[RMDB]
Source information: An RNA of 177 nucleotides, treated with DMS and 2A3 and read out base by base.

RNA sequence: GGGAACGACUCGAGUAGAGUCGAAAAGAUCCUUAUGUAGAAGACUCUGUUGCUUAAUGAGAAUGAAUCCUAAUUCGACACUAGGUGGUAACCCCUCGCUAUUAUUCGGAAUAGGACACUCUCUAUCACCGAAAGUAGUGUUCGCACUACUUUCGGUAAAAGAAACAACAACAACAAC
Reactivity to DMS in 0.01 (KOAc 150mM, MgCl2 10mM, bicine 150mM(pH8.5), 24C), signal-to-noise 2, nucleotides 027 to 126: g000a080u010c000c000u000u000a050u010g010u020a100g000a060a080g000a090c120u010c040u030g050u010u000g010c040u010u000a080a090u000g000a000g000a010a050u000g010a140a140u000c000c000u000a000a040u000u000c010g000a030c300a050c180u000a010g000g000u000g000g000u140a120a050c250c270c000c000u000c000g020c040u000a040u000u030a110u010u010c030g000g000a000a110u000a030g000g000a070c020a010c050u010c020u030c050u000a080u010c180
Reactivity to 2A3 in 0.01 (KOAc 150mM, MgCl2 10mM, bicine 150mM(pH8.5), 24C), signal-to-noise 2, nucleotides 027 to 126: g060a130u080c000c000u110u040a170u140g080u080a080g030a190a000g040a040c080u030c120u120g030u030u030g010c020u080u030a230a030u290g000a000g000a010a010u090g020a070a200u000c000c000u010a070a070u000u010c040g020a000c000a000c030u000a000g000g060u020g060g020u100a110a120c000c070c000c020u000c010g100c050u040a050u210u010a020u120u080c000g000g000a010a010u000a010g000g010a000c000a000c000u000c000u000c020u020a010u200c150
The data come from the RNA Mapping Database (RMDB), libraries RFM100 and RFMREP.